Source information
Chemical mapping of a 207-nucleotide RNA with 2A3. For 2A3 the reverse transcriptase was SuperScript II with manganese.

RNA sequence: GGGAACGACUCGAGUAGAGUCGAAAAACCCGACUUCGGUCGGGUAAAAAACCUUUGUGCUACGCGGUAGGGAGAUAAGCACAUCCCAUUGGGAUGUGUCUUAUCGAAGAACUACCGACCCGUAGCACUCUGGUAAAAAGUGUACUUCGGUACACAACACCCUUACAGACUUCGGUCUGUAAGGGUGAAAAGAAACAACAACAACAAC
Reactivity to 2A3 in 0.01 (KOAc 150mM, MgCl2 10mM, bicine 150mM(pH8.5), 24C), signal-to-noise 2, nucleotides 027 to 156: a000c040c000c000g000a010c000u080u060c260g120g000u010c060g010g000g010u040a000a020a000a030a000a010c000c000u000u000u000g000u000g040c000u000a000c000g030c030g010g020u010a000g010g010g020a050g000a020u010a000a000g020c000a000c000a000u010c010c000c070a300u290u300g000g000g000a000u000g000u000g040u060c010u010u000a000u000c000g000a020a000g000a000a000c030u000a000c000c010g000a020c040c040c010g000u000a000g000c000a000c000u000c000u000g000g000u020a050a050a050a120a050g020u020g010u020a000c000u030u140c300g100g000u020a000c000a000c000a030a040

Values are in units of 0.01, from 0 to 300, in steps of 10.